[RMDB]
RNA sequence: GGGAACGACUCGAGUAGAGUCGAAAAACGCCAUCAUCAGCGCCAAUAGCAUUGCAAACACCAAAGUGGAAUGCCCUAUUGCGCUGGUGUCGUCGGAAUUCAGUUGGCUUAGGGAGGCUCUCCGACCAAACGAGACAGAUUUCGAUCUGUCUCGUUUAAAAGAAACAACAACAACAAC
Reactivity to DMS in 0.01 (KOAc 150mM, MgCl2 10mM, bicine 150mM(pH8.5), 24C), signal-to-noise 6, nucleotides 027 to 126: a090c100g020c060c020a110u000c010a010u000c010a010g010c000g010c160c110a020a010u000a030g020c100a030u000u000g010c010a030a040a110c110a140c170c240a050a130a190g010u000g000g000a030a030u000g000c090c300c060u000a020u000u000g010c000g010c010u000g010g020u000g000u010c110g010u000c030g000g010a050a070u000u000c110a090g010u010u000g010g000c040u000u010a120g010g000g010a110g000g010c020u000c100u010c000c020g000a050c070c230
Reactivity to 2A3 in 0.01 (KOAc 150mM, MgCl2 10mM, bicine 150mM(pH8.5), 24C), signal-to-noise 3, nucleotides 027 to 126: a000c070g040c040c010a030u050c000a000u010c000a030g010c000g030c100c060a010a000u010a010g000c020a060u010u200g120c020a090a070a030c070a040c120c070a230a110a010g080u040g020g030a100a020u020g010c080c020c000u010a000u000u020g000c010g000c000u000g000g000u010g020u010c050g030u000c010g040g030a020a060u200u100c040a080g100u120u080g140g000c010u060u060a090g010g090g030a040g050g000c030u000c010u000c020c000g030a010c030c010
Structure probing data (DMS and 2A3) for a 177-nucleotide construct. For DMS, 6,340 sequencing reads were counted. Reactivities are given for positions 27 through 126. For DMS the reverse transcriptase was MarathonRT.